[RMDB]
RNA sequence: GGGAACGACUCGAGUAGAGUCGAAAAAGGCCGACGCCGGGAUCACCGGUCCGCCGAUGCCGCGGUCCUUGGCGAUCUUGGCCGCCCGCACCGCGUCGAUGAUGACGCCGGCCGAGUUUGGCGAGUCCUGCACUUUCAUAUUCGUAUGAAAGUGCAGAAAAGAAACAACAACAACAAC
Reactivity to DMS in 0.01 (KOAc 150mM, MgCl2 10mM, bicine 150mM(pH8.5), 24C), signal-to-noise 4, nucleotides 027 to 126: a080g000g000c000c000g040a090c020g010c000c000g020g000g010a030u000c000a060c300c010g000g000u000c090c100g020c050c070g020a080u040g010c080c040g070c300g000g000u010c000c010u010u050g040g000c020g000a070u010c070u030u030g010g000c020c010g020c010c000c010g020c140a100c100c100g000c010g000u000c010g020a190u030g000a090u030g000a010c000g000c010c070g000g000c110c020g010a100g010u000u010u010g000g000c020g010a130g020u050c090
Reactivity to 2A3 in 0.01 (KOAc 150mM, MgCl2 10mM, bicine 150mM(pH8.5), 24C), signal-to-noise 5, nucleotides 027 to 126: a000g050g000c000c000g010a010c010g000c010c000g010g000g010a010u040c010a020c130c040g000g040u050c040c040g150c040c030g070a060u170g020c060c020g030c030g010g000u030c000c020u130u300g010g000c020g140a200u000c000u080u090g010g000c000c000g000c010c000c000g000c030a060c020c100g000c020g000u000c020g060a240u300g010a090u300g010a040c010g000c000c000g020g010c010c020g090a150g060u040u090u190g050g020c040g020a030g050u070c000
An RNA of 177 nucleotides, treated with DMS and 2A3 and read out base by base. For 2A3, 2,868 sequencing reads were counted. The RNA was probed in 150 mM KOAc, 10 mM MgCl2 and 150 mM bicine (pH 8.5) at 24 C.